[RMDB]
RNA sequence: GGGAACGACUCGAGUAGAGUCGAAAAGAUAUGGAUCGCAGUGGAGACUGACAAUCGGAAACGAUUGGAGGUCGAUGAAACUGCGAGUCCUAAGUCAAACAUUGACAAUCUUCGGAUUGUCAAUGAACUCUAUCUGAUAGUUCGCUAUCAGAUAGAGAAAAGAAACAACAACAACAAC
Reactivity to 2A3 in 0.01 (KOAc 150mM, MgCl2 10mM, bicine 150mM(pH8.5), 24C), signal-to-noise 3, nucleotides 027 to 126: g010a000u010a000u050g000g000a000u010c000g000c000a010g020u010g010g040a030g010a000c010u030g020a030c000a010a010u000c010g000g010a030a000a000c000g000a010u010u010g020g000a020g020g020u010c010g000a040u000g000a000a000a000c000u010g000c000g000a010g000u000c000c000u000a010a000g010u000c030a070a090a110c010a020u010u010g000a000c000a000a020u000c010u040u080c300g090g000a010u010u000g000u000c000a000a000u000g000a010a000
Reactivity to DMS in 0.01 (KOAc 150mM, MgCl2 10mM, bicine 150mM(pH8.5), 24C), signal-to-noise 7, nucleotides 027 to 126: g000a020u000a070u010g000g000a100u010c000g000c000a010g020u000g000g000a020g010a000c000u000g010a300c010a000a000u000c000g020g010a020a020a050c000g010a000u000u000g000g000a300g010g010u000c000g010a070u010g000a120a180a020c000u000g000c000g010a020g010u000c000c000u010a010a120g000u000c010a110a120a250c020a000u000u000g010a010c000a010a000u000c000u000u020c220g020g000a020u000u000g000u000c000a000a000u000g000a080a110